[RMDB]
RNA sequence: GGGAACGACUCGAGUAGAGUCGAAAAGUUGAGAGCGUUUAACUUAAGUCUUUUUUAUUAGCUUAAAAAAACUAUAUACAAGUGGUGGUAGUCCGCCACUCUAAGGGGGCGCCUUUAGAAGAAGAGGGAAAGGCACUAAGCUUCGGCUUAGUGCCAAGCUAUUAGCAUUGUUCGCAAUGCUAAUAGCAAAAGAAACAACAACAACAAC
Reactivity to 2A3 in 0.01 (KOAc 150mM, MgCl2 10mM, bicine 150mM(pH8.5), 24C), signal-to-noise 2, nucleotides 027 to 156: g040u060u090g030a040g020a040g000c010g000u010u050u170a070a030c010u080u060a050a020g070u210c040u080u150u040u040u070u010a130u120u140a150g030c030u010u050a000a040a000a040a020a020a020c110u130a150u020a040u110a210c030a090a000g010u010g060g010u010g050g040u040a070g160u090c000c000g000c010c000a010c010u000c020u010a010a040g030g010g010g030g000c030g060c040c030u000u090u120a040g010a060a000g020a050a020g000a030g000g030g080a030a030a120g030g000c000a000c010u000a000a000g010c000u040u080c250g030g000c000u000u000a000g000u000g010c000c000a000a000

This 207-nucleotide RNA was probed chemically with 2A3.
Reactivities are given for positions 27 through 156.
Source: RMDB library M2RFPK, as collected in RNAgym.
Conditions: 150 mM KOAc, 10 mM MgCl2 and 150 mM bicine (pH 8.5), 24 C.